Description
This 207-nucleotide RNA was probed chemically with 2A3. Values are in units of 0.01, from 0 to 300, in steps of 10. Source: RMDB library OK3TST, as collected in RNAgym. High 2A3 reactivity points to a flexible backbone, as in loops and unpaired stretches.
RNA sequence: GGGAACGACUCGAGUAGAGUCGAAAAAUCAUGGAGCAGUUCACGCGGCGCCGCUUGACGCCCCACGAGCCGAGGAUGCGAUUCACGCGGGAGUCCGAAGGAUGGCGACUUGGCCAGCAGAGAGCGAACAGCGGGAUUCUAGGGCGCUCACCUGUCGAGUGUGGUAAUCAUUCGUGAUUACCACACUAAAAGAAACAACAACAACAAC
Reactivity to 2A3 in 0.01 (KOAc 150mM, MgCl2 10mM, bicine 150mM(pH8.5), 24C), signal-to-noise 1, nucleotides 027 to 156: a000u110c080a090u100g060g010a120g050c030a030g020u140u110c010a050c220g050c100g050g040c050g080c000c000g050c030u040u040g000a020c000g000c010c110c000c000a040c110g020a060g060c030c030g000a000g040g010a060u150g000c030g110a030u010u000c060a030c210g000c010g000g010g000a160g150u100c030c000g010a010a030g030g000a020u020g060g000c000g000a020c020u020u020g010g010c000c000a000g010c030a020g180a020g010a000g120c020g040a120a040c010a030g030c070g000g000g000a020u050u030c020u050a040g000g020g000c010g020c060u000c030a050c010c010u030g090u070c020g030